[RMDB]
Annotation: Structure probing data (2A3 and DMS) for a 177-nucleotide construct.

RNA sequence: GGGAACGACUCGAGUAGAGUCGAAAAGAAAGAGCCGGUGAGACUGAAGCUCGAACUGUGAUAAAACUAAAUGUUUCACUGUGAAAGAAGCCGACGCUCACUGUCGGUGAGUGAACCGGGAAAGAAACCCAACUUUUUAGUUCGCUAAAAAGUUGGGAAAAGAAACAACAACAACAAC
Reactivity to 2A3 in 0.01 (KOAc 150mM, MgCl2 10mM, bicine 150mM(pH8.5), 24C), signal-to-noise 2, nucleotides 027 to 126: g050a010a060a020g080a010g140c000c000g000g020u020g010a100g030a040c030u040g040a050a030g010c030u010c020g020a020a030c000u020g020u040g080a030u140a120a050a030a010c050u070a130a140a090u240g010u000u020u000c000a000c000u010g020u030g160a090a140a070g060a070a030g030c000c000g010a020c040g000c040u050c050a030c020u030g080u120c020g020g030u010g010a030g060u040g010a010a030c000c020g010g030g060a060a160a070g030a080a070a040
Reactivity to DMS in 0.01 (KOAc 150mM, MgCl2 10mM, bicine 150mM(pH8.5), 24C), signal-to-noise 2, nucleotides 027 to 126: g000a100a100a140g010a300g020c020c000g000g020u000g000a080g000a110c030u010g010a090a150g000c000u000c040g010a110a090c040u000g000u020g000a090u060a000a020a110a100c060u020a060a130a070u020g000u010u000u000c000a010c030u000g010u020g000a130a100a090g000a090a060g030c000c010g010a240c200g000c090u020c030a030c070u030g000u020c020g010g000u020g010a060g030u020g000a140a080c000c000g000g000g000a130a040a110g010a100a050a120
The DMS profile rests on 2,923 reads. The reactions ran in a buffer of 150 mM KOAc, 10 mM MgCl2 and 150 mM bicine (pH 8.5), at 24 C. For 2A3, 1,868 sequencing reads were counted. DMS adducts were read by reverse transcription with MarathonRT.